RNA sequence: GGGAACGACUCGAGUAGAGUCGAAAAUGCACAACCGCGAGCACUGGAAACACAUUCUGUUCGGCGCGACCGUGUUCGCACCGCCGGAAGCUCAGCCGAUCAAAUGCUUCCUCCUGCCGGCCAACUGUCGGACUGCCGUCGCGACGGCCGGCGCGGCUAUUAGUCGAGUUUUCGAACUCGACUAAUAAAAAGAAACAACAACAACAAC
Reactivity to DMS in 0.01 (KOAc 150mM, MgCl2 10mM, bicine 150mM(pH8.5), 24C), signal-to-noise 2, nucleotides 027 to 156: u010g030c010a110c090a070a160c040c030g020c000g040a140g040c050a110c020u000g030g000a100a070a030c040a060c030a130u000u000c070u000g020u010u000c010g050g050c030g000c020g000a200c070c100g040u010g000u000u000c060g030c060a040c040c030g000c220c040g020g000a030a120g000c110u000c080a150g020c030c060g010a100u020c060a020a120a120u000g000c040u000u000c010c010u000c010c040u000g050c010c010g040g020c000c020a030a080c060u000g020u010c010g030g010a090c040u000g000c130c110g000u010c050g050c030g020a040c010g000g000c030c000g030g020c000g020c020g030g000c020
Reactivity to 2A3 in 0.01 (KOAc 150mM, MgCl2 10mM, bicine 150mM(pH8.5), 24C), signal-to-noise 5, nucleotides 027 to 156: u150g030c040a050c030a090a100c050c030g000c020g010a030g010c020a040c110u110g030g050a060a130a010c120a020c020a160u110u060c080u130g040u080u050c000g010g030c030g020c020g030a020c020c030g050u050g070u200u080c080g010c060a030c010c060g020c000c020g000g020a020a010g000c020u040c220a030g010c000c010g020a020u070c070a020a040a050u080g010c030u020u010c000c000u010c010c010u030g000c000c000g000g000c010c010a080a070c110u130g000u030c010g010g030a040c040u210g100c100c130g040u010c050g020c010g140a020c010g000g000c000c000g000g000c010g000c000g000g010c000